[RMDB]
RNA sequence: GGGAACGACUCGAGUAGAGUCGAAAAGAUAUGGACGUAUUUAUCGAGGAUCUCCAUCUUCUCGGAAACGAGAAGAGUGGAGGGAGAUAAAUACGUCCUAAGUCAAACCUUACCUUCGGGUAAGGAACUAAUCAGAGUCGUUCGCGACUCUGAUUAGAAAAGAAACAACAACAACAAC
Reactivity to 2A3 in 0.01 (KOAc 150mM, MgCl2 10mM, bicine 150mM(pH8.5), 24C), signal-to-noise 1, nucleotides 027 to 126: g020a030u050a020u200g020g020a010c000g020u020a000u010u030u010a010u010c000g000a300g120g060a070u010c010u010c030c000a020u000c010u050u000c000u010c000g000g050a160a110a050c020g020a010g010a010a000g030a050g070u080g010g000a000g000g020g000a040g000a000u000a000a000a000u010a000c010g010u000c010c000u000a000a010g010u000c000a020a060a140c000c000u000u000a010c000c000u020u090c300g160g000g000u020a010a010g010g000a000a010
Reactivity to DMS in 0.01 (KOAc 150mM, MgCl2 10mM, bicine 150mM(pH8.5), 24C), signal-to-noise 1, nucleotides 027 to 126: g000a030u000a300u010g000g000a000c000g000u000a000u000u000u000a000u000c000g010a070g020g030a030u010c000u000c000c010a070u010c000u000u000c000u000c000g030g010a150a120a210c010g000a020g020a000a000g000a020g040u000g010g000a040g000g000g000a030g010a000u000a000a010a020u000a000c010g000u000c000c000u000a020a110g000u000c060a140a110a240c010c000u010u010a000c000c020u000u010c200g010g020g010u000a010a010g000g020a020a130

The data come from the RNA Mapping Database (RMDB), library TTRDES. An RNA of 177 nucleotides, treated with 2A3 and DMS and read out base by base. The DMS profile rests on 1,702 reads. For 2A3, 2,870 sequencing reads were counted. The RNA was probed in 150 mM KOAc, 10 mM MgCl2 and 150 mM bicine (pH 8.5) at 24 C. DMS adducts were read by reverse transcription with MarathonRT.